This 177-nucleotide RNA was probed chemically with DMS.
Conditions: 150 mM KOAc, 10 mM MgCl2 and 150 mM bicine (pH 8.5), 24 C.
Values cover nucleotides 27 to 126.
The data come from the RNA Mapping Database (RMDB), library OK2TST.
The DMS profile rests on 1,115 reads.

RNA sequence: GGGAACGACUCGAGUAGAGUCGAAAACUUGUUAUGCCUAUUUAGCGAAAGCAAUGUUGGACUUUUCGCGUGAUCACAAUGACAUUUUGUACACACCUCCAACUGUCAGUUAUGGUUCUACAUUACACACGGAAGAGAGGUUCGCCUCUCUUCCGUGAAAAGAAACAACAACAACAAC
Reactivity to DMS in 0.01 (KOAc 150mM, MgCl2 10mM, bicine 150mM(pH8.5), 24C), signal-to-noise 2, nucleotides 027 to 126: c060u000u000g040u010u010a050u000g010c040c040u010a140u000u010u000a140g020c000g010a050a110a120g000c120a060a120u000g000u010u000g000g000a080c070u000u000u000u000c030g010c020g020u000g000a080u000c140a070c070a070a030u010g000a040c090a060u000u000u000u020g010u000a070c090a080c070a100c040c020u010c010c030a060a060c200u000g010u000c060a020g000u010u000a110u020g000g010u000u000c070u010a040c070a090u020u020a110c170a170